About this RNA:
The record gives the reactivity of an RNA of 177 nucleotides to 2A3 and DMS. For 2A3 the reverse transcriptase was SuperScript II with manganese. The DMS profile rests on 1,378 reads. Values cover nucleotides 27 to 126. DMS adducts were read by reverse transcription with MarathonRT.
RNA sequence: GGGAACGACUCGAGUAGAGUCGAAAAGAUAUGGAGGUAGCCUGCAAGUCGGUCGGAAACGACGACCGAUGAUGACCAGGAACUACUACCUCCUAAGUCAAAACCCUCCCACUUCGGUGGGAGGGAAGGAUUACGGUAAGUUCGCUUACCGUAAUCCAAAAGAAACAACAACAACAAC
Reactivity to 2A3 in 0.01 (KOAc 150mM, MgCl2 10mM, bicine 150mM(pH8.5), 24C), signal-to-noise 3, nucleotides 027 to 126: g010a010u060a030u180g000g000a000g000g020u000a010g050c010c020u000g020c020a120a230g010u000c010g010g000u000c040g040g170a300a300a180c200g240a050c020g000a000c060c010g020a000u020g040a160u070g020a020c120c000a010g020g000a080a020c060u260a050c010u010a010c270c000u000c000c000u000a070a000g000u020c010a000a020a110a210c000c000c000u030c030c000c010a000c030u050u070c270g080g020u000g000g000g010a000g010g000g000a000a030
Reactivity to DMS in 0.01 (KOAc 150mM, MgCl2 10mM, bicine 150mM(pH8.5), 24C), signal-to-noise 2, nucleotides 027 to 126: g010a030u010a300u000g030g000a020g000g010u000a000g010c000c000u010g010c050a020a140g000u000c000g010g000u020c040g000g040a080a070a210c250g000a190c020g000a000c000c010g010a010u000g000a110u030g020a150c300c010a030g000g000a050a020c070u010a300c020u000a000c010c000u000c000c000u000a010a060g020u000c040a070a020a070a120c000c000c000u000c000c010c000a010c000u000u010c200g000g000u000g050g000g020a000g000g000g000a000a010